[RMDB]
RNA sequence: GGGAACGACUCGAGUAGAGUCGAAAAGAGCGUUGGCGUAUAUCGCACUUCUGGCCAUGUCCUCCCGGUACCGAGUUGUGGCUUAUUAGCGAAAUAUCGGUUGUCGGAAUGCUAAUAUAUACGGAAAGGGAUUAACUUACUUCGGUAGGUUAAUCCCAAAAGAAACAACAACAACAAC
Reactivity to DMS in 0.01 (KOAc 150mM, MgCl2 10mM, bicine 150mM(pH8.5), 24C), signal-to-noise 7, nucleotides 027 to 126: g010a060g010c090g010u010u020g010g010c030g010u000a050u020a040u020c110g010c020a080c120u010u010c020u000g010g020c030c070a080u010g010u010c030c010u010c060c030c050g000g010u010a040c040c020g000a090g010u010u000g010u010g010g010c060u000u010a070u020u020a030g010c020g010a070a090a070u030a080u020c050g000g010u010u020g010u010c030g000g000a070a040u020g000c020u000a050a060u020a030u010a050u010a040c060g000g010a080a090a130
Reactivity to 2A3 in 0.01 (KOAc 150mM, MgCl2 10mM, bicine 150mM(pH8.5), 24C), signal-to-noise 9, nucleotides 027 to 126: g090a010g010c080g020u030u060g050g000c020g010u020a030u010a020u130c050g010c030a050c040u060u040c020u050g020g000c010c030a110u120g040u030c010c010u030c010c020c010g010g020u030a020c010c010g010a010g030u020u030g150u100g180g000c010u090u090a100u090u220a120g000c030g090a080a040a030u250a110u060c030g020g000u010u060g040u020c010g020g000a030a020u080g000c000u030a080a030u050a050u010a010u010a120c060g070g030a080a050a100
Overview
Chemical mapping of a 177-nucleotide RNA with DMS and 2A3. Reactivities are given for positions 27 through 126. The reactions ran in a buffer of 150 mM KOAc, 10 mM MgCl2 and 150 mM bicine (pH 8.5), at 24 C. 2A3 is a SHAPE reagent: it acylates the 2'-hydroxyl of flexible nucleotides of all four kinds.